[RMDB]
RNA sequence: GGGAACGACUCGAGUAGAGUCGAAAAAGGCUUAAACGGAAAGAAGAGAGUCAAGGCUCUCAAAUUUCGCAAACUCCGUGACAAGAGAAUGGGCACUGAAGUUUAUGGAGACGAUGCCACGAUUGAGCCGGUUAGGUAAUUUCGAUUACCUAACCGGAAAAGAAACAACAACAACAAC
Reactivity to DMS in 0.01 (KOAc 150mM, MgCl2 10mM, bicine 150mM(pH8.5), 24C), signal-to-noise 4, nucleotides 027 to 126: a040g010g000c030u020u020a020a070a110c030g030g000a020a010a040g020a230a200g000a000g000a020g000u000c050a090a140g010g000c010u010c000u010c000a020a200a200u020u000u000c020g030c110a060a050a120c010u010c000c010g000u000g000a030c090a100a110g000a080g010a080a100u000g000g000g000c070a060c020u000g000a080a130g000u010u020u030a020u030g020g020a070g020a050c200g010a080u020g010c010c000a090c140g010a040u010u040g010a100g030
Reactivity to 2A3 in 0.01 (KOAc 150mM, MgCl2 10mM, bicine 150mM(pH8.5), 24C), signal-to-noise 5, nucleotides 027 to 126: a000g030g000c030u110u100a130a010a000c040g010g020a020a040a040g050a160a070g020a010g010a010g000u050c110a070a180g200g000c000u000c000u000c000a060a030a030u050u020u000c020g010c010a050a060a060c010u000c020c000g020u000g010a010c070a090a050g050a000g110a270a130u180g020g010g050c030a000c050u060g090a120a050g060u040u060u140a070u070g010g020a020g010a050c060g030a040u100g010c010c000a040c020g080a090u070u130g040a020g020